An RNA of 207 nucleotides, treated with 2A3 and DMS and read out base by base. The data come from the RNA Mapping Database (RMDB), library OK3TST. High DMS reactivity at an A or C suggests that its Watson-Crick edge is free.
[RMDB]
RNA sequence: GGGAACGACUCGAGUAGAGUCGAAAAGGACGAAGGCUGAAGCAAUCACAUGCCAUGCACAACUGUCAAACGGCAAGAAUGAAUGAUGGAUGGAAAGAAUGGGAAUGUGUACGUUAUCUUGCUCCACUUUGGACAGUCAUGAUCAUGGAAGAUAGAAACCUAAAUGCCUAUUCGUAGGCAUUUAGGUAAAAGAAACAACAACAACAAC
Reactivity to 2A3 in 0.01 (KOAc 150mM, MgCl2 10mM, bicine 150mM(pH8.5), 24C), signal-to-noise 9, nucleotides 027 to 156: g050g010a020c040g040a040a010g030g010c030u040g020a040a000g030c050a050a080u090c030a040c010a090u100g040c010c010a010u030g020c090a020c010a060a060c010u030g020u030c010a060a030a020c070g010g000c010a010a020g030a040a080u160g040a050a030u090g070a070u070g020g060a020u040g020g060a100a080a050g080a070a090u100g020g000g040a070a100u080g040u020g020u100a020c050g030u040u050a050u050c000u000u030g000c020u050c050c020a070c040u070u040u030g070g010a010c010a010g020u050c030a060u130g040a070u060c000a010u020g030g020a040a010g030a030u150a040g100a040a080
Reactivity to DMS in 0.01 (KOAc 150mM, MgCl2 10mM, bicine 150mM(pH8.5), 24C), signal-to-noise 4, nucleotides 027 to 156: g010g010a070c040g010a060a030g000g020c040u010g020a090a120g040c080a090a110u000c040a070c080a120u010g010c050c030a060u010g000c090a110c040a050a080c030u000g020u010c030a060a040a140c080g010g010c010a030a050g010a050a070u000g020a120a100u000g020a090u000g000g010a090u010g000g010a110a050a110g010a040a100u010g020g010g010a060a100u010g030u010g020u000a070c070g010u000u000a120u000c010u000u000g000c050u000c070c050a070c090u000u020u000g030g010a050c020a030g010u010c040a100u000g000a100u000c010a040u000g030g010a080a060g000a120u000a110g010a090a110